Source: RMDB library OK1LIB, as collected in RNAgym. An RNA of 177 nucleotides, treated with 2A3 and DMS and read out base by base. 2A3 adducts were read by reverse transcription with SuperScript II with manganese. For DMS, 33,017 sequencing reads were counted. The reactions ran in a buffer of 150 mM KOAc, 10 mM MgCl2 and 150 mM bicine (pH 8.5), at 24 C.
RNA sequence: GGGAACGACUCGAGUAGAGUCGAAAAUCACAAAGCGGAUUUAGCUCGGUUGGGAGAGGUCCAGACCGAAGAUCUGGUUGUCCUGUGGUCGAAUCACAGAAUUCGCACCAUAAACAACGGGAGAUUCAAAUAUAGUGGGUUUCGACCCACUAUAUUUAAAAGAAACAACAACAACAAC
Reactivity to 2A3 in 0.01 (KOAc 150mM, MgCl2 10mM, bicine 150mM(pH8.5), 24C), signal-to-noise 9, nucleotides 027 to 126: u090c020a020c070a110a150a020g090c070g050g020a030u030u080u130a050g040c020u010c010g060g020u040u060g040g020g010a170g020a050g090g070u040c010c010a020g050a060c010c030g030a030a010g020a030u010c000u050g130g000u010u010g030u040c040c090u070g000u000g010g000u000c010g010a000a000u020c030a080c040a300g110a160a030u000u010c000g000c020a010c000c000a010u040a020a070a010c020a010a000c030g070g030g000a050g010a010u100u090c060
Reactivity to DMS in 0.01 (KOAc 150mM, MgCl2 10mM, bicine 150mM(pH8.5), 24C), signal-to-noise 9, nucleotides 027 to 126: u020c050a070c090a090a090a180g020c100g000g000a030u010u010u030a110g010c060u010c020g010g010u010u020g010g000g000a060g000a120g000g010u010c020c030a100g010a090c080c050g000a030a030g000a130u000c000u000g000g010u000u000g000u000c130c130u010g020u000g000g010u000c010g000a010a000u000c030a170c230a160g000a100a030u000u000c000g010c200a010c010c000a010u000a050a150a020c030a030a030c010g000g000g010a040g000a120u010u000c050